[RMDB]
Chemical mapping of a 207-nucleotide RNA with 2A3. Values cover nucleotides 27 to 156. The data come from the RNA Mapping Database (RMDB), library M2RFPK. 2A3 adducts were read by reverse transcription with SuperScript II with manganese. For 2A3, 738 sequencing reads were counted.

RNA sequence: GGGAACGACUCGAGUAGAGUCGAAAAACGCGGAGUACGCUCCGCGACAACACUUCUUUCGACCCGCUAACCGAGACCUAUGGGUCGUUAAAUUACGUCUCUAUCAUACUCACAUAACAUCGCACAAAAAACGUGGUUCGGUUCGCCGAACCACGAACCCUUAGCAUGACUUCGGUCAUGCUAAGGGAAAAGAAACAACAACAACAAC
Reactivity to 2A3 in 0.01 (KOAc 150mM, MgCl2 10mM, bicine 150mM(pH8.5), 24C), signal-to-noise 2, nucleotides 027 to 156: a000c000g000c000g020g000a000g000u000a010c140g040c070u000c000c000g050c000g040a000c000a050a030c040a030c040u170u120c000u070u250u120c010g000a000c000c050c000g070c250u200a090a040c090c050g000a020g010a040c010c010u030a040u260g040g000g000u020c000g030u010u030a040a000a010u140u010a000c020g030u000c000u050c000u050a100u160c120a060u050a150c040u070c100a040c040a120u200a150a050c010a240u300c050g000c190a110c080a020a000a020a130a100a080c040g000u000g000g000u000u000c040g000g040u000u030c100g020c030c010g000a000a000c000c000a000c000g000a000a000